An RNA of 207 nucleotides, treated with DMS and 2A3 and read out base by base. The reactions ran in a buffer of 150 mM KOAc, 10 mM MgCl2 and 150 mM bicine (pH 8.5), at 24 C.

RNA sequence: GGGAACGACUCGAGUAGAGUCGAAAAGUUGAGAGCGUUUAACUUAAGUCUUUUUUAUUAGCUUAGAAAAACUAUAUACAAGUGGUGGUAGUCCGCCACUCUAAGGGGACGCCUUUAGAAGAAGAGGGAAAGGCACUAAGCUUCGGCUUAGUGCCAACAUUAUCCAUAGGUUCGCCUAUGGAUAAUGAAAAGAAACAACAACAACAAC
Reactivity to DMS in 0.01 (KOAc 150mM, MgCl2 10mM, bicine 150mM(pH8.5), 24C), signal-to-noise 2, nucleotides 027 to 156: g020u000u010g000a070g010a120g010c060g000u000u000u000a070a080c030u010u000a040a130g010u000c000u000u000u000u000u000u000a060u030u010a090g000c010u000u000a160g000a160a030a030a060a030c010u000a050u000a180u010a080c080a030a050g040u000g010g010u010g010g010u000a200g000u000c020c040g010c000c010a030c000u010c010u000a020a040g020g010g010g000a080c220g030c010c000u000u000u000a040g000a060a130g010a060a050g000a050g020g020g000a080a100a110g000g010c020a020c000u000a000a010g020c020u000u000c300g050g000c000u000u000a000g020u000g000c000c010a000a030
Reactivity to 2A3 in 0.01 (KOAc 150mM, MgCl2 10mM, bicine 150mM(pH8.5), 24C), signal-to-noise 4, nucleotides 027 to 156: g070u070u060g060a060g010a020g040c030g020u070u080u100a120a060c020u090u080a070a030g060u160c080u080u200u060u060u030u040a170u130u100a070g010c010u070u050a030g020a020a090a010a000a010c070u080a080u040a030u060a300c070a110a010g000u000g030g010u010g020g040u090a090g120u030c020c010g000c010c000a010c000u000c010u010a020a040g010g000g020g010a000c020g070c000c000u050u100u070a040g010a110a000g010a030a010g030a060g020g020g020a070a110a130g010g000c010a010c000u000a010a000g010c000u020u030c180g050g000c000u000u000a000g010u000g000c000c000a000a000